[RMDB]
RNA sequence: GGGAACGACUCGAGUAGAGUCGAAAAGAUAUGGACCUUGCGAGGAUCUACUGAUCGGAAACGAUCAGGUAGGGAGCAACGUCCUAAGUCAAAGUUUUUCGUAUCGCUUCGGCGAUACGAAAAACAAGAGUAUCCUGUUGUUCGCAACAGGAUACUCAAAAGAAACAACAACAACAAC
Reactivity to 2A3 in 0.01 (KOAc 150mM, MgCl2 10mM, bicine 150mM(pH8.5), 24C), signal-to-noise 2, nucleotides 027 to 126: g000a040u060a050u130g000g010a010c010c080u000u010g000c010g080a300g040g030a050u000c000u010a030c020u020g000a000u000c020g010g050a060a050a050c010g010a010u010c010a010g050g080u060a010g000g020g000a000g000c010a010a000c000g000u000c020c000u040a130a030g030u030c080a120a040a140g000u010u010u010u000u000c010g000u000a010u020c010g000c030u060u070c280g190g000c010g000a000u010a000c000g000a000a000a000a010a000c000a040a000
Reactivity to DMS in 0.01 (KOAc 150mM, MgCl2 10mM, bicine 150mM(pH8.5), 24C), signal-to-noise 2, nucleotides 027 to 126: g000a030u000a300u040g000g010a000c000c090u000u000g000c000g000a080g040g010a100u010c000u010a000c000u000g010a000u000c000g010g000a070a080a230c000g010a000u000c010a040g000g000u010a010g020g000g010a070g020c000a000a000c230g010u000c000c010u000a020a090g000u000c030a120a100a080g010u000u000u000u000u000c000g020u000a000u000c000g000c000u000u020c180g030g010c010g000a000u020a020c000g000a000a000a000a000a000c010a070a060

Conditions: 150 mM KOAc, 10 mM MgCl2 and 150 mM bicine (pH 8.5), 24 C. Structure probing data (2A3 and DMS) for a 177-nucleotide construct. 2A3 adducts were read by reverse transcription with SuperScript II with manganese. Source: RMDB library TTRDEL, as collected in RNAgym.